[RMDB]
RNA sequence: GGGAACGACUCGAGUAGAGUCGAAAAGAUAUGGACUUGGAGGUUCGCACGACGAAUUCGGAAACGAACUAUCGUGAACUACGAGCGAAGAGUCCUAAGUCAAAAGCAGCGUGUUCGCACGCUGCAACUAUAUACUCAACUUCGGUUGAGUAUAUAGAAAAGAAACAACAACAACAAC
Reactivity to DMS in 0.01 (KOAc 150mM, MgCl2 10mM, bicine 150mM(pH8.5), 24C), signal-to-noise 8, nucleotides 027 to 126: g010a050u000a300u010g010g020a020c010u000u000g000g010a300g010g000u000u000c010g010c010a020c030g010a040c080g010a040a170u000u010c010g000g010a100a080a170c000g020a010a010c110u000a160u000c000g010u000g010a120a100c120u020a270c020g000a020g010c010g000a300a140g000a020g000u000c000c000u000a030a120g020u010c050a060a060a080a130g010c010a010g000c000g020u000g010u000u010c170g010c000a000c000g000c000u010g010c010a010a040
Reactivity to 2A3 in 0.01 (KOAc 150mM, MgCl2 10mM, bicine 150mM(pH8.5), 24C), signal-to-noise 7, nucleotides 027 to 126: g050a000u070a040u120g010g000a000c000u010u030g030g050a120g300g200u070u010c020g000c020a010c020g030a010c040g130a250a300u020u010c010g010g030a060a060a040c010g010a010a010c040u050a070u060c010g000u010g010a060a040c090u180a060c280g000a000g010c020g000a030a020g020a020g010u000c010c000u020a120a020g060u030c030a030a030a050a110g010c000a000g000c010g000u020g060u090u220c260g040c130a000c010g000c000u000g010c000a000a000
Conditions: 150 mM KOAc, 10 mM MgCl2 and 150 mM bicine (pH 8.5), 24 C. This 177-nucleotide RNA was probed chemically with DMS and 2A3. For 2A3, 22,659 sequencing reads were counted. It was measured as part of the RMDB library TTRDEL. 2A3 adducts were read by reverse transcription with SuperScript II with manganese. Values cover nucleotides 27 to 126. For DMS the reverse transcriptase was MarathonRT. Reactivities are rounded to 0.1 and cut off at 0 and 3.